[RMDB]
This 177-nucleotide RNA was probed chemically with DMS and 2A3. For 2A3, 4,417 sequencing reads were counted.
RNA sequence: GGGAACGACUCGAGUAGAGUCGAAAAGAUAUGGAAUUCAGCAAGCUCCUAGCAUUUGACCCUUCGGGAGUAAUCGGAAACGAUUACAGAAGCAAAUGCUAGGAGUGAUGACCUGAAUUCCUAAGUCCAACAAUAGUUUCUUCGGAAACUAUUGUUGAAAAGAAACAACAACAACAAC
Reactivity to DMS in 0.01 (KOAc 150mM, MgCl2 10mM, bicine 150mM(pH8.5), 24C), signal-to-noise 5, nucleotides 027 to 126: g000a090u000a300u010g010g000a010a010u010u000c000a000g030c020a120a280g010c000u000c000c010u000a000g010c000a010u000u000u000g000a240c260c270c030u000u000c020g000g020g020a200g020u000a000a000u000c000g000g000a130a150a300c010g030a010u000u000a000c000a070g000a030a040g000c010a010a010a000u000g010c000u000a000g000g000a010g020u000g000a030u010g000a140c300c000u000g000a020a010u000u000c000c000u000a020a110g010u010c070
Reactivity to 2A3 in 0.01 (KOAc 150mM, MgCl2 10mM, bicine 150mM(pH8.5), 24C), signal-to-noise 2, nucleotides 027 to 126: g020a060u150a110u230g020g000a010a000u010u000c010a010g000c010a070a230g000c000u030c010c000u010a000g000c010a000u040u010u070g110a220c080c070c020u060u040c150g140g020g120a300g090u020a000a010u010c010g030g040a090a060a160c020g020a010u020u010a020c030a070g040a060a010g020c030a000a000a010u020g000c010u010a010g000g010a000g000u010g010a010u000g010a010c000c010u000g000a000a000u020u000c010c000u010a100a010g020u050c010
The RNA was probed in 150 mM KOAc, 10 mM MgCl2 and 150 mM bicine (pH 8.5) at 24 C.